[RMDB]
RNA sequence: GGGAACGACUCGAGUAGAGUCGAAAAUUUAGUAGAGAUGGGGUUUCACCGUGUUGGCCAGGCUGUUCUGAAAUUCCUGACCUCAGGUGAUCCGCCUGUUUUGGCCUCCCAAAGUGCUGGGAUUACACCUAUCCUCCUCUUUCGAGAGGAGGAUAGGAAAAGAAACAACAACAACAAC
Reactivity to DMS in 0.01 (KOAc 150mM, MgCl2 10mM, bicine 150mM(pH8.5), 24C), signal-to-noise 2, nucleotides 027 to 126: u010u000u000a070g020u000a090g000a030g000a030u000g010g000g000g020u000u000u010c000a010c030c000g020u010g000u020u000g010g030c020c000a020g000g040c300u000g010u000u000c190u000g010a060a090a130u010u000c010c010u000g000a030c020c020u000c030a030g000g000u010g010a030u000c030c030g010c020c010u010g000u000u000u000u010g010g030c070c040u010c000c010c030a040a120a110g010u010g020c070u010g000g000g020a110u020u000a060c160a160
Reactivity to 2A3 in 0.01 (KOAc 150mM, MgCl2 10mM, bicine 150mM(pH8.5), 24C), signal-to-noise 1, nucleotides 027 to 126: u100u110u090a060g000u180a040g030a030g030a010u110g000g040g000g040u030u020u000c020a060c060c040g020u000g020u130u110g040g020c010c000a000g030g070c010u020g070u300u110c140u170g100a140a130a180u090u000c000c000u000g000a010c020c030u020c010a000g000g000u000g050a020u020c010c010g030c020c000u000g120u000u030u050u040g070g020c000c000u020c010c030c050a060a090a000g130u080g020c060u070g020g050g010a030u000u130a110c080a060